Chemical mapping of a 177-nucleotide RNA with 2A3 and DMS. DMS adducts were read by reverse transcription with MarathonRT. 2A3 adducts were read by reverse transcription with SuperScript II with manganese. The RNA was probed in 150 mM KOAc, 10 mM MgCl2 and 150 mM bicine (pH 8.5) at 24 C.
[RMDB]
RNA sequence: GGGAACGACUCGAGUAGAGUCGAAAAAAUUUUCCAUAAAAGCCACUGAGUGGGGGAAUGCCAGCUAAACUUAAUGCUGCGAUAAAGAAUGACCAACCAAGUACAGGAUAUCGUUUAAUUAAGCCACUGAUUACAGUUACUUCGGUAACUGUAAUCAAAAAGAAACAACAACAACAAC
Reactivity to 2A3 in 0.01 (KOAc 150mM, MgCl2 10mM, bicine 150mM(pH8.5), 24C), signal-to-noise 5, nucleotides 027 to 126: a000a010u120u050u020u010c070c000a080u190a050a170a020a010g020c010c010a020c080u100g020a050g070u020g030g020g010g020g020a080a060u080g030c020c020a020g020c060u130a150a110a080c010u030u070a020a040u120g030c040u020g010c020g020a010u080a060a100a050g160a060a070u060g010a020c020c020a050a020c020c010a110a030g030u040a150c040a060g010g010a020u020a030u050c020g000u020u080u080a110a100u030u030a060a000g020c010c000a060c050
Reactivity to DMS in 0.01 (KOAc 150mM, MgCl2 10mM, bicine 150mM(pH8.5), 24C), signal-to-noise 3, nucleotides 027 to 126: a070a100u030u000u020u000c000c000a150u060a020a100a120a180g000c090c030a030c060u000g000a120g030u010g010g000g010g000g010a060a030u000g040c060c030a070g000c050u010a080a050a140c100u000u020a060a070u030g000c070u010g000c030g000a060u000a020a050a130g010a210a090u020g000a030c040c010a020a090c090c090a070a070g020u030a060c070a030g020g000a060u000a030u000c030g010u000u010u030a070a080u010u010a060a080g010c070c080a080c240

Values cover nucleotides 27 to 126.